[RMDB]
Structure probing data (2A3 and DMS) for a 177-nucleotide construct. For 2A3 the reverse transcriptase was SuperScript II with manganese. The RNA was probed in 150 mM KOAc, 10 mM MgCl2 and 150 mM bicine (pH 8.5) at 24 C. For DMS, 2,412 sequencing reads were counted. For DMS the reverse transcriptase was MarathonRT.

RNA sequence: GGGAACGACUCGAGUAGAGUCGAAAAACUCGACCUAGAAUGAGGUCGAGAGUCGUGCAAAUAAGAGGCUCGACAGAUGCACGACAAAGCGAGCCUACAACAAACAAGGAAAACUAAACAAAUGAAACGACUUCGUCGAGUUCGCUCGAUGAAGUCGAAAAGAAACAACAACAACAAC
Reactivity to 2A3 in 0.01 (KOAc 150mM, MgCl2 10mM, bicine 150mM(pH8.5), 24C), signal-to-noise 5, nucleotides 027 to 126: a000c000u000c000g000a000c000c000u060a120g190a300a260u270g080a120g000g000u000c000g000a000g000a000g000u010c020g000u000g010c020a060a090a010u120a210a090g040a020g050g000c000u020c030g050a040c040a050g100a040u060g000c010a000c010g030a020c100a040a000a000g030c010g000a000g000c000c000u080a060c030a110a020c020a030a110a040c090a040a010g160g020a090a120a050a000c080u140a170a040a000c090a050a080a050u170g050a060a060a030
Reactivity to DMS in 0.01 (KOAc 150mM, MgCl2 10mM, bicine 150mM(pH8.5), 24C), signal-to-noise 3, nucleotides 027 to 126: a110c010u030c000g020a000c000c000u010a130g010a130a210u010g000a090g000g000u000c000g010a000g020a150g020u000c040g060u000g010c010a070a060a120u040a080a170g000a120g010g030c000u000c030g040a180c100a090g050a140u010g000c040a000c040g000a060c060a040a150a160g020c010g000a060g000c000c000u010a100c240a100a110c170a020a080a080c180a090a240g000g010a090a070a100a030c180u050a060a040a050c140a100a040a090u030g000a040a080a150